[RMDB]
RNA sequence: GGGAACGACUCGAGUAGAGUCGAAAACGCAACACAGUGAGUGGACGGAAGAAAUCCCCUUCCCACCUCCCCACUGUCCACUCACUGUCUUCCUAAUAGGAAAUAUAAAUCGGGGGUGGGAAGGGGAGCUAGGACGGUCGUUCGCGACCGUCCUAGCAAAAGAAACAACAACAACAAC
Reactivity to 2A3 in 0.01 (KOAc 150mM, MgCl2 10mM, bicine 150mM(pH8.5), 24C), signal-to-noise 1, nucleotides 027 to 126: c120g030c070a150a010c020a010c000a070g000u000g060a000g000u000g000g000a000c020g070g000a110a000g100a040a110a110u110c000c000c000c020u000u000c000c000c000a050c000c000u040c000c060c000c030a020c000u080g000u000c000c000a000c000u000c090a000c000u000g050u020c000u050u070c000c000u170a300a050u170a170g170g000a000a160a000u300a090u030a000a130a000u160c030g000g000g000g000g000u000g000g000g070a000a000g000g000g000g000a000